[RMDB]
Source: RMDB library OK2TST, as collected in RNAgym. This 177-nucleotide RNA was probed chemically with 2A3 and DMS. For 2A3 the reverse transcriptase was SuperScript II with manganese. For 2A3, 4,259 sequencing reads were counted. Conditions: 150 mM KOAc, 10 mM MgCl2 and 150 mM bicine (pH 8.5), 24 C.
RNA sequence: GGGAACGACUCGAGUAGAGUCGAAAACUGAUCCGUACCGCAGAAGAUGAACAUGUUGUUGGUUUGCAACGUGUCGCUGAACCUGAAGAGGAUGAUGAUAUCCUUGAUGGCGAAUCAUCAGAAGGUAACUAAAAUCCACUUUCGAGUGGAUUUUAGUAAAAGAAACAACAACAACAAC
Reactivity to 2A3 in 0.01 (KOAc 150mM, MgCl2 10mM, bicine 150mM(pH8.5), 24C), signal-to-noise 4, nucleotides 027 to 126: c020u030g030a080u020c000c030g020u050a020c010c020g010c070a020g020a220a010g010a070u060g020a030a010c000a010u020g000u010u000g030u020u070g190g170u190u200u240g000c000a000a010c010g000u000g000u020c060g000c110u030g030a030a020c010c010u030g010a060a020g010a020g080g000a000u010g020a100u170g020a040u080a020u200c010c020u030u090g050a050u090g010g010c010g030a010a060u030c010a010u000c010a020g070a120a010g090g000u060a040
Reactivity to DMS in 0.01 (KOAc 150mM, MgCl2 10mM, bicine 150mM(pH8.5), 24C), signal-to-noise 6, nucleotides 027 to 126: c060u010g010a070u000c030c050g020u000a050c030c020g030c100a100g010a170a110g010a040u000g000a170a100c010a030u000g000u000u000g010u010u000g020g010u000u000u000g000c010a000a020c020g040u000g020u010c160g010c110u000g010a130a100c030c000u000g010a150a110g010a040g000g010a020u010g000a140u010g000a110u010a060u000c000c000u000u000g000a170u000g000g010c040g000a100a100u000c020a020u000c010a060g010a120a110g000g010u000a080